RNA sequence: GGGAACGACUCGAGUAGAGUCGAAAACGAUAUGCCGGCGCGCUACGGCAUGCUAUACGCGGCUAGCAUUAGCUACGUAGCAUUAUAGCCGUAAUGCUAUAUAUAUAUACGUAAUCGGCAUCGAUGCCUUGAGUAAUUACUUCGGUAAUUACUCAAGAAAAGAAACAACAACAACAAC
Reactivity to 2A3 in 0.01 (KOAc 150mM, MgCl2 10mM, bicine 150mM(pH8.5), 24C), signal-to-noise 8, nucleotides 027 to 126: c030g020a070u060a030u220g000c000c010g020g000c030g000c010g000c040u020a000c000g010g000c020a010u010g000c000u060a080u020a180c050g010c060g060g000c030u020a020g050c060a270u300u050a010g000c010u010a010c010g010u010a000g000c000a010u080u080a190u180a120g000c000c010g000u010a030a020u050g000c030u010a010u000a000u010a000u000a000u010a010u020a170c030g020u030a090a100u100c010g010g000c010a010u020c020g050a040u150g080c010
Reactivity to DMS in 0.01 (KOAc 150mM, MgCl2 10mM, bicine 150mM(pH8.5), 24C), signal-to-noise 9, nucleotides 027 to 126: c050g010a100u010a050u000g020c010c000g020g020c210g020c070g010c050u000a010c010g010g010c010a030u000g010c020u000a070u010a060c070g020c030g000g000c030u010a040g000c250a110u010u000a020g010c010u000a030c010g000u000a010g010c020a030u000u010a200u000a130g010c010c020g010u000a040a050u000g000c020u000a060u000a060u010a090u010a120u010a100u000a040c100g010u010a070a100u000c000g010g010c010a040u000c080g010a110u010g000c110
This 177-nucleotide RNA was probed chemically with 2A3 and DMS.
For DMS the reverse transcriptase was MarathonRT.
The data come from the RNA Mapping Database (RMDB), library OK2TRN.